[RMDB]
RNA sequence: GGGAACGACUCGAGUAGAGUCGAAAAUGCAUCUGUUAUUCAGUUCACACACAGGCUGCAAAGCAUGGAGGUUUGUUAUUAAUAUUUCUGUGCCCUUGAGAUAAACCCACAUGGAAUUUUACAGAUUAAAAGAGGAAAUUGGCCAAAAGAAUGAAAGAUUAAGUACUGAUUUCGAUCAGUACUUAAUAAAAGAAACAACAACAACAAC
Reactivity to DMS in 0.01 (KOAc 150mM, MgCl2 10mM, bicine 150mM(pH8.5), 24C), signal-to-noise 2, nucleotides 027 to 156: u000g000c060a100u020c070u000g010u000u000a080u010u000c060a130g010u000u030c070a080c050a090c050a080c020a080g040g000c000u030g030c120a050a140a110g000c010a040u010g010g020a100g030g020u000u010u000g010u000u000a120u000u000a050a110u020a070u000u000u000c030u000g000u000g010c000c040c040u000u000g020a150g000a140u000a070a080a120c000c020c020a110c070a080u000g010g010a050a080u000u010u010u000a100c010a090g010a140u000u010a030a030a100a130g000a120g000g000a030a060a080u000u010g010g030c070c060a070a030a040a120g020a030a080u020g000a100a050a100g000
Reactivity to 2A3 in 0.01 (KOAc 150mM, MgCl2 10mM, bicine 150mM(pH8.5), 24C), signal-to-noise 1, nucleotides 027 to 156: u170g010c030a040u000c030u010g040u150u210a120u170u110c010a050g070u100u030c070a020c000a010c000a000c010a050g040g020c030u000g060c070a020a000a100g000c020a020u060g020g020a000g020g030u020u070u200g040u070u110a030u090u110a200a050u100a070u040u080u000c050u030g040u030g010c000c000c050u000u030g040a030g020a070u100a040a130a030c010c010c000a050c020a020u050g000g050a010a000u000u000u060u170a070c020a010g020a040u000u210a110a090a090a070g010a050g020g010a080a080a090u120u080g080g000c010c080a000a140a030a000g030a090a050u200g010a150a060a000g120

Conditions: 150 mM KOAc, 10 mM MgCl2 and 150 mM bicine (pH 8.5), 24 C. Structure probing data (DMS and 2A3) for a 207-nucleotide construct. For 2A3, 507 sequencing reads were counted. For 2A3 the reverse transcriptase was SuperScript II with manganese. It was measured as part of the RMDB library OK3TST.